[RMDB]
RNA sequence: GGGAACGACUCGAGUAGAGUCGAAAAGUGUUUCCAUUUUACAGAGAGGUUGUCACUUGCCGAGUUCAAUUAGCUGGAAGUGAUAGGAGGACUUGAACUCACAUGGUCUGGCUCCAGGGCCUAAGGUCUAUGAGUGGAGCUACUUCCAAUAAGAAAGCCAGUAUUUAUGCUUCGGCAUAAAUACUGGAAAAGAAACAACAACAACAAC
Reactivity to DMS in 0.01 (KOAc 150mM, MgCl2 10mM, bicine 150mM(pH8.5), 24C), signal-to-noise 2, nucleotides 027 to 156: g020u000g020u000u000u000c010c010a170u010u000u020u010a190c040a080g000a150g030a120g000g040u030u000g060u020c030a080c050u010u000g010c010c040g020a150g040u000u000c080a110a150u000u020a110g040c050u030g010g000a030a040g010u000g010a100u000a090g020g020a070g020g010a050c080u000u000g000a100a060c050u030c030a090c040a090u000g030g010u000c040u000g030g030c000u000c040c060a180g000g000g040c000c030u000a020a040g080g030u010c000u000a060u000g000a110g030u010g020g010a090g020c060u040a010c010u000u040c040c030a040a060u000a090a110g020a120a100a190g000
Reactivity to 2A3 in 0.01 (KOAc 150mM, MgCl2 10mM, bicine 150mM(pH8.5), 24C), signal-to-noise 2, nucleotides 027 to 156: g080u060g000u020u010u020c030c010a050u110u170u070u150a110c120a030g050a000g000a000g170g000u120u060g010u030c010a020c030u020u120g100c090c030g090a010g000u040u120c080a100a170u190u090a170g040c030u020g010g040a060a010g010u040g050a070u030a060g000g110a050g010g000a010c030u080u080g050a040a040c050u050c060a020c030a100u100g000g020u000c010u020g020g010c020u000c040c020a080g010g000g050c030c060u100a130a080g030g000u020c010u020a080u150g060a040g060u040g000g000a020g000c010u020a030c000u030u010c000c000a040a110u090a110a060g090a040a020a040g040